Annotation
Conditions: 150 mM KOAc, 10 mM MgCl2 and 150 mM bicine (pH 8.5), 24 C. An RNA of 177 nucleotides, treated with 2A3 and DMS and read out base by base. For DMS, 2,308 sequencing reads were counted. Source: RMDB library TTRDES, as collected in RNAgym.

[RMDB]
RNA sequence: GGGAACGACUCGAGUAGAGUCGAAAAGAUAUGGAGUUACUAGGCUUUUGACGCGUUUACAUCGGAAACGAUGUUAACGCGAUAAGCCUGUAACUCCUAAGUCAAAAGCCUGCGUUCGCGCAGGCAACCUUACAGCACACUUCGGUGUGCUGUAAGGAAAAGAAACAACAACAACAAC
Reactivity to 2A3 in 0.01 (KOAc 150mM, MgCl2 10mM, bicine 150mM(pH8.5), 24C), signal-to-noise 2, nucleotides 027 to 126: g010a010u030a020u090g000g000a010g010u000u030a050c220u250a020g090g040c020u080u150u250u300g300a240c040g000c010g000u000u000u000a000c000a000u000c000g000g000a020a020a030c000g000a010u000g010u010u000a000a000c000g020c000g000a000u020a010a000g000c000c000u000g010u000a010a010c000u000c000c010u000a000a010g000u000c020a020a110a000a110g020c000c000u000g000c000g000u030u100c300g040c010g000c120a010g010g000c010a000a000
Reactivity to DMS in 0.01 (KOAc 150mM, MgCl2 10mM, bicine 150mM(pH8.5), 24C), signal-to-noise 2, nucleotides 027 to 126: g010a030u000a270u000g000g000a030g010u000u010a000c000u020a010g010g010c010u000u010u000u010g010a160c060g000c000g030u000u000u010a030c000a010u000c010g000g000a040a090a140c000g010a010u010g000u000u010a010a000c000g010c020g010a030u010a010a000g020c010c000u000g000u000a000a000c000u000c000c000u000a000a040g010u000c010a140a100a130a150g010c000c000u000g010c000g010u010u000c280g010c010g000c000a010g000g020c000a000a010

For DMS the reverse transcriptase was MarathonRT.